An RNA of 207 nucleotides, treated with 2A3 and read out base by base.
RNA sequence: GGGAACGACUCGAGUAGAGUCGAAAACAAUGACGAUUCUGACAAGCCAGACCAACUAUUUUCAGGGUAACUUCGGACCAGGGUGGAAGAGCCCUGUUCUUGCUUCGCCUGCAGUGCCGGCAUCCGGGGCAGAACUCGCAAACCCAUUCGCCUAUGACCAUCGUUAAGCUUUCGAGCUUAACGAUGGAAAAGAAACAACAACAACAAC
Reactivity to 2A3 in 0.01 (KOAc 150mM, MgCl2 10mM, bicine 150mM(pH8.5), 24C), signal-to-noise 3, nucleotides 027 to 156: c040a040a170u100g050a020c020g050a050u080u040c040u020g020a030c040a050a000g060c000c020a050g020a060c000c060a060a090c040u140a100u180u150u110u130c050a050g000g050g030u030a040a050c020u090u090c050g050g000a050c040c030a030g060g050g000u100g030g090a060a070g030a020g080c010c000c000u020g000u030u000c010u000u080g030c020u060u050c050g030c000c000u010g020c040a050g050u040g130c010c060g030g000c060a060u060c040c040g010g030g040g000c000a000g020a030a010c050u000c040g020c050a020a060a070c030c000c010a010u100u090c110g040c020c020u120a120u150g050a050
Conditions: 150 mM KOAc, 10 mM MgCl2 and 150 mM bicine (pH 8.5), 24 C. Reactivities are rounded to 0.1 and cut off at 0 and 3.